[RMDB]
RNA sequence: GGGAACGACUCGAGUAGAGUCGAAAAGGAUGUUUGCAUUCUUGCGUCAAUGCAAACAUGAUUGGCUUCGUCGAGAAUUGACGCAAGAAUUCUCUGUCAAGCGGCACAAUGACUGACGAAGCCAAGACUAACUGCUUUGUGCCGCUAGUGGUUAGGACAUCACUGCUGAUUUCGAUCAGCAGUGAUGAAAAGAAACAACAACAACAAC
Reactivity to 2A3 in 0.01 (KOAc 150mM, MgCl2 10mM, bicine 150mM(pH8.5), 24C), signal-to-noise 3, nucleotides 027 to 156: g110g050a030u080g000u050u020u070g030c000a000u000u050c050u070u080g070c000g050u070c030a020a000u030g020c000a000a020a020c020a010u080g080a160u060u090g000g000c000u010u000c010g010u000c020g020a020g040a140a070u060u050g030a030c060g020c110a010a010g020a010a050u090u040c040u040c040u050g150u100c070a060a000g010c000g000g000c000a010c000a020a230u190g050a100c090u040g000a000c000g000a000a000g000c020c000a000a010g010a000c010u040a060a030c030u030g020c000u030u010u040g010u000g000c000c000g010c010u010a000g030u000g030g020u010u040a030g010g020a000
Reactivity to DMS in 0.01 (KOAc 150mM, MgCl2 10mM, bicine 150mM(pH8.5), 24C), signal-to-noise 1, nucleotides 027 to 156: g020g000a050u000g010u000u000u000g040c020a050u000u010c010u000u000g040c080g060u000c040a020a020u000g020c030a000a030a010c040a030u000g000a100u000u000g040g010c000u000u000c000g040u000c030g030a150g010a050a090u000u000g050a040c080g040c090a070a250g030a070a070u000u000c030u000c040u000g030u000c050a160a040g010c030g000g000c000a060c020a080a050u000g010a230c050u010g010a040c020g000a060a040g010c030c010a020a010g040a150c080u030a010a040c090u000g000c020u000u000u010g040u000g010c030c020g030c020u000a010g030u000g000g030u010u000a080g030g000a150
Source: RMDB library OK3TST, as collected in RNAgym.
An RNA of 207 nucleotides, treated with 2A3 and DMS and read out base by base.
For 2A3, 2,497 sequencing reads were counted.
The DMS profile rests on 3,083 reads.
2A3 adducts were read by reverse transcription with SuperScript II with manganese.
The reactions ran in a buffer of 150 mM KOAc, 10 mM MgCl2 and 150 mM bicine (pH 8.5), at 24 C.